[RMDB]
RNA sequence: GGGAACGACUCGAGUAGAGUCGAAAAACGCAGGGGACCAGUGGAGCCGUGGGAUGCUCUUCCCAAUCUGACCUGACCCCUCCCCCAGCGGGUCGCCCAGGAAUGGCGGGACCCCACUUCAGCAGGGCAUAGAUAGACGGUUCGCCGUCUAUCUAUGAAAAGAAACAACAACAACAAC
Reactivity to DMS in 0.01 (KOAc 150mM, MgCl2 10mM, bicine 150mM(pH8.5), 24C), signal-to-noise 2, nucleotides 027 to 126: a060c180g020c100a030g000g010g030g000a110c180c020a030g000u020g000g000a050g030c080c120g010u000g000g000g000a080u010g020c090u010c140u020u000c040c000c000a030a100u000c060u000g020a120c090c000u000g000a180c010c000c000c010u000c000c030c000c020c050a080g000c220g020g010g000u000c020g000c050c000c000a070g000g040a090a090u010g010g000c130g000g020g010a030c030c000c000c090a040c090u000u000c130a110g000c050a060g000g010g000
Reactivity to 2A3 in 0.01 (KOAc 150mM, MgCl2 10mM, bicine 150mM(pH8.5), 24C), signal-to-noise 2, nucleotides 027 to 126: a030c090g020c030a030g060g030g000g040a130c070c030a020g000u090g090g040a050g050c060c060g140u130g000g090g010a040u090g060c040u010c000u150u000c000c000c020a000a040u080c050u060g140a100c030c010u010g090a120c010c000c000c000u000c000c000c000c010c000a010g060c070g010g000g000u020c030g130c050c020c040a010g040g180a070a070u050g020g060c110g020g030g020a000c020c030c000c010a050c000u170u140c010a050g000c020a020g000g050g000
Chemical mapping of a 177-nucleotide RNA with DMS and 2A3.
The data come from the RNA Mapping Database (RMDB), library VIROID.
Values cover nucleotides 27 to 126.